Source: RMDB library OK1LIB, as collected in RNAgym. Chemical mapping of a 177-nucleotide RNA with DMS and 2A3. The reactions ran in a buffer of 150 mM KOAc, 10 mM MgCl2 and 150 mM bicine (pH 8.5), at 24 C. Reactivities are given for positions 27 through 126. DMS adducts were read by reverse transcription with MarathonRT.

[RMDB]
RNA sequence: GGGAACGACUCGAGUAGAGUCGAAAAUAUGAACCAAAGGGACAAUUCAUUGUAUUUCCAGUUGUUUAACAACACAAACUCUGUUUUGGCAGGCAACUGCAAACUGAAGUUUACUGACGCUGGCGAAACCAUGCAUCGGGUUCGCCCGAUGCAUGGUAAAAGAAACAACAACAACAAC
Reactivity to DMS in 0.01 (KOAc 150mM, MgCl2 10mM, bicine 150mM(pH8.5), 24C), signal-to-noise 1, nucleotides 027 to 126: u010a100u000g000a070a150c020c040a000a080a020g020g020g000a000c090a070a170u000u000c000a040u000u000g000u020a110u000u030u000c100c000a020g020u000u000g000u000u100u000a100a130c100a060a140c150a100c120a010a000a030c090u000c000u000g000u000u000u000u030g000g090c050a010g010g040c300a050a060c010u000g030c020a020a010a010c000u000g000a000a000g050u030u000u000a080c120u000g000a050c050g000c120u000g010g030c090g000a050a070
Reactivity to 2A3 in 0.01 (KOAc 150mM, MgCl2 10mM, bicine 150mM(pH8.5), 24C), signal-to-noise 3, nucleotides 027 to 126: u230a000u060g040a040a030c000c040a160a260a130g170g010g010a060c120a060a130u080u000c010a000u100u290g120u170a070u040u110u000c000c000a000g030u000u000g150u020u300u100a120a110c100a030a020c050a000c030a060a130a100c020u020c030u040g050u170u060u010u170g260g000c000a040g010g000c020a060a110c010u000g000c000a010a000a000c000u030g060a060a000g000u050u060u090a110c140u070g130a000c050g020c050u030g000g000c090g070a190a010